This 207-nucleotide RNA was probed chemically with 2A3 and DMS. Conditions: 150 mM KOAc, 10 mM MgCl2 and 150 mM bicine (pH 8.5), 24 C. The DMS profile rests on 2,910 reads. As a SHAPE reagent, 2A3 marks flexible, mostly unpaired nucleotides at the ribose 2'-OH. The data come from the RNA Mapping Database (RMDB), library M2RFPK. 2A3 adducts were read by reverse transcription with SuperScript II with manganese.
[RMDB]
RNA sequence: GGGAACGACUCGAGUAGAGUCGAAAAGACGCCUUUAGAAGAAGAGGCUAGGGGGUAUCCCGGUGUGGGAUACUUAGUAAUAUGCAACGCUAAUUGCAUAAGAUUGUAGGACGGAAUUUACAGUCUUUAGAGAUAAGCACGUUCGCGUGCUUAUCAACUAGGAUCGUUAGUUCGCUAACGAUCCUAGAAAAGAAACAACAACAACAAC
Reactivity to 2A3 in 0.01 (KOAc 150mM, MgCl2 10mM, bicine 150mM(pH8.5), 24C), signal-to-noise 4, nucleotides 027 to 156: g040a020c030g020c030c000u060u050u100a210g040a270a060g020a080a020g000a040g030g010c020u030a060g060g060g010g000g000u010a000u000c000c040c050g080g100u290g060u260g020g000g000a000u000a000c000u000u030a010g010u030a040a100u020a020u100g000c000a000a010c070g010c150u130a080a070u080u000g020c000a010u020a040a020g020a020u000u080g020u030a010g030g070a050c080g030g070a070a060u080u100u060a040c030a000g010u000c000u040u060u090a100g030a000g000a040u000a010a000g000c000a000c000g000u040u070c260g020c000g060u010g000c000u000u000a000u010c000a000a000
Reactivity to DMS in 0.01 (KOAc 150mM, MgCl2 10mM, bicine 150mM(pH8.5), 24C), signal-to-noise 2, nucleotides 027 to 156: g030a100c040g000c010c000u000u010u010a080g020a180a180g010a120a090g020a090g030g020c010u000a110g020g010g010g030g020u000a020u000c000c020c020g000g030u000g010u000g010g020g010a030u000a000c010u000u000a080g030u000a040a140u000a040u000g000c010a010a070c080g030c150u010a100a120u010u020g000c000a070u000a020a020g000a100u000u000g010u000a050g030g020a210c040g000g020a110a290u000u000u000a070c000a070g000u000c010u000u020u000a120g000a140g000a030u000a010a010g000c000a000c020g000u000u000c300g030c050g030u000g000c000u000u000a000u000c000a020a110